Structure probing data (DMS) for a 177-nucleotide construct. For DMS, 1,441 sequencing reads were counted.
[RMDB]
RNA sequence: GGGAACGACUCGAGUAGAGUCGAAAAGAUGCGUGAGCGUGUCAGCUCUUUGGUGGGGCCUGUAGCCCAGCGCAUGUGGGUAUCGACAUUCCACUCCACGUGCGUGCGUAUUUUGCGGGAACAGGCACCAUGCCCCCUGGUUCGCCAGGGGGCAUGGAAAAGAAACAACAACAACAAC
Reactivity to DMS in 0.01 (KOAc 150mM, MgCl2 10mM, bicine 150mM(pH8.5), 24C), signal-to-noise 1, nucleotides 027 to 126: g010a050u010g020c030g000u010g000a050g010c040g050u010g020u000c150a100g010c030u000c010u000u000u020g030g030u010g020g000g010g030c010c020u010g010u010a140g030c020c000c010a240g000c010g000c010a000u000g000u000g020g000g020u000a100u000c160g010a130c160a160u000u000c040c100a110c080u030c000c000a000c000g030u010g020c010g000u010g000c210g010u010a090u000u010u020u010g010c080g000g000g000a230a030c020a030g000g010c030a070